An RNA of 177 nucleotides, treated with 2A3 and DMS and read out base by base. For 2A3 the reverse transcriptase was SuperScript II with manganese. DMS adducts were read by reverse transcription with MarathonRT. Values cover nucleotides 27 to 126.
[RMDB]
RNA sequence: GGGAACGACUCGAGUAGAGUCGAAAAGUCGUCGUUUGCAGUCUAGCUUUGCAGCCUUCUUCGGUGGUUUGGCUGCUUUCUUUCUUUCCACCGUUGCUAGUUUUCUUUUCUGCUUUCGACGACGAGAGGCUGGUUUCGCGUUCGCGCGAGGCCAGCCAAAAGAAACAACAACAACAAC
Reactivity to 2A3 in 0.01 (KOAc 150mM, MgCl2 10mM, bicine 150mM(pH8.5), 24C), signal-to-noise 7, nucleotides 027 to 126: g000u010c000g000u000c000g010u010u020u010g000c000a000g000u000c040u050a040g010c070u140u110u160g060c050a040g020c020c030u060u070c010u050u060c040g060g030u040g020g030u050u070u060g050g000c030u050g070c010u080u050u020c010u000u070u010c000u010u030u010c010c010a030c000c020g030u020u030g000c050u030a050g030u040u010u080u090c040u040u080u040u010c000u000g000c000u000u000u010c000g000a000c000g000a000c000g000a010g000a000
Reactivity to DMS in 0.01 (KOAc 150mM, MgCl2 10mM, bicine 150mM(pH8.5), 24C), signal-to-noise 1, nucleotides 027 to 126: g010u000c000g000u000c000g000u000u000u010g000c010a020g000u030c030u020a040g020c130u020u010u050g020c080a050g000c050c090u000u000c030u010u000c060g010g010u000g000g010u020u000u000g060g000c050u010g020c010u030u000u010c020u000u000u000c060u000u000u010c000c070a110c100c060g000u010u000g040c070u020a030g000u020u000u020u000c050u030u010u010u010c000u010g000c020u000u000u000c000g020a010c000g000a000c000g000a090g000a170